[RMDB]
RNA sequence: GGGAACGACUCGAGUAGAGUCGAAAAGGUGCCUCGAUAAUAAAGUAUGCAUUAAAGAUAAACGCAGAAGAUAAUUUUGCAUUAGCAGCUUAAUUUAGCGCUGCUCAUCCUUCCUCAAUUGCCCACGGUUGAGAGUAAGGGUGUCAUUUAAAAGUGGGAAGUAAAGAAGGUUCGCCUUCUUUACUUCAAAAGAAACAACAACAACAAC
Reactivity to 2A3 in 0.01 (KOAc 150mM, MgCl2 10mM, bicine 150mM(pH8.5), 24C), signal-to-noise 4, nucleotides 027 to 156: g050g020u060g030c000c010u040c040g030a060u050a220a030u090a060a190a020g070u100a050u090g020c020a030u090u100a100a120a030g070a060u110a090a170a020c110g020c040a050g010a100a010g040a100u110a120a120u130u110u130u110g010c000a030u040u060a020g010c030a010g000c020u070u150a100a070u290u180u220a110g040c020g000c020u000g000c000u000c000a020u010c000c000u010u010c010c000u020c000a000a000u000u010g010c000c000c000a010c000g000g000u000u000g010a000g010a020g050u170a000a000g000g010g000u010g010u000c010a010u010u210u200a080a140a000a000g000u000g000g000
Reactivity to DMS in 0.01 (KOAc 150mM, MgCl2 10mM, bicine 150mM(pH8.5), 24C), signal-to-noise 2, nucleotides 027 to 156: g020g020u000g010c030c000u000c050g030a100u010a070a100u000a110a080a080g020u010a090u010g000c010a100u010u000a050a070a150g020a140u000a040a040a120c060g030c020a020g010a050a060g010a160u010a050a150u000u010u000u000g010c000a090u000u000a040g020c010a070g020c000u010u010a060a120u010u000u020a090g030c150g000c010u000g030c010u000c040a020u000c000c010u000u010c030c000u000c000a000a020u000u010g010c030c020c040a060c060g010g010u000u000g000a040g010a130g010u010a020a010g040g030g030u010g020u000c080a090u010u010u000a060a030a090a060g040u000g020g000